[RMDB]
RNA sequence: GGGAACGACUCGAGUAGAGUCGAAAACAAGCCAGCUUGAAGGCGAUUUGGGGUAAGUAACCAUGAAUCAUACGUAUCUAGUAGGGCCAUAAGCGACUACCCUUUGCCAAUUCGAAGCAGAAUAUGCGAAUUCCCCGUCGUUCGCGACGGGGAAUUCAAAAGAAACAACAACAACAAC
Reactivity to 2A3 in 0.01 (KOAc 150mM, MgCl2 10mM, bicine 150mM(pH8.5), 24C), signal-to-noise 1, nucleotides 027 to 126: c160a210a000g050c000c040a000g000c000u000u000g140a000a000g070g000c000g000a000u000u100u070g010g000g000g000u090a180a220g000u000a000a130c000c000a000u080g160a150a170u050c140a000u000a120c070g070u080a080u050c000u050a140g000u000a000g080g000g150c000c010a040u040a180a000g070c000g080a000c000u000a000c070c000c000u000u000u000g070c100c000a140a200u030u030c010g080a000a010g000c000a000g070a250a000u300a100u300g070c000